[RMDB]
RNA sequence: GGGAACGACUCGAGUAGAGUCGAAAAAGGCGCCAAGCUCCCCAGCAUCAUGCAGGAAGCUGCAGCCCCGCAGAGUUAGGACAGCUCAUUUGGCACCCGGCGAGCCCUUCCCAGGCCCGCAGCCCAGUUAUAGAUCCACCUUCGGGUGGAUCUAUAAAAAAGAAACAACAACAACAAC
Reactivity to DMS in 0.01 (KOAc 150mM, MgCl2 10mM, bicine 150mM(pH8.5), 24C), signal-to-noise 3, nucleotides 027 to 126: a150g010g000c040g020c020c040a070a070g000c040u000c040c010c010c040a090g000c080a060u010c060a110u020g020c040a070g020g000a140a120g040c010u000g040c040a100g030c010c020c010c040g040c110a080g000a070g020u040u020a090g000g010a090c110a100g010c020u010c020a110u020u010u000g010g000c040a060c030c010c020g000g020c010g000a120g000c060c010c020u000u010c030c030c030a250g000g000c020c000c020g000c040a130g020c010c010c010a130g010
Reactivity to 2A3 in 0.01 (KOAc 150mM, MgCl2 10mM, bicine 150mM(pH8.5), 24C), signal-to-noise 1, nucleotides 027 to 126: a000g050g000c020g000c020c020a030a010g000c020u050c000c000c000c000a020g020c000a060u190c000a020u150g030c000a020g000g060a070a070g070c030u020g000c050a040g000c030c000c000c010g010c010a040g010a020g090u120u120a060g020g120a020c020a040g000c020u060c060a130u030u060u170g000g000c000a050c010c030c000g010g000c020g000a020g010c010c000c000u030u000c000c000c000a010g000g000c060c030c010g000c010a010g010c000c010c000a010g000
Chemical mapping of a 177-nucleotide RNA with DMS and 2A3. Conditions: 150 mM KOAc, 10 mM MgCl2 and 150 mM bicine (pH 8.5), 24 C. The data come from the RNA Mapping Database (RMDB), library RFM100. For DMS, 4,057 sequencing reads were counted. For 2A3, 1,365 sequencing reads were counted. Values cover nucleotides 27 to 126.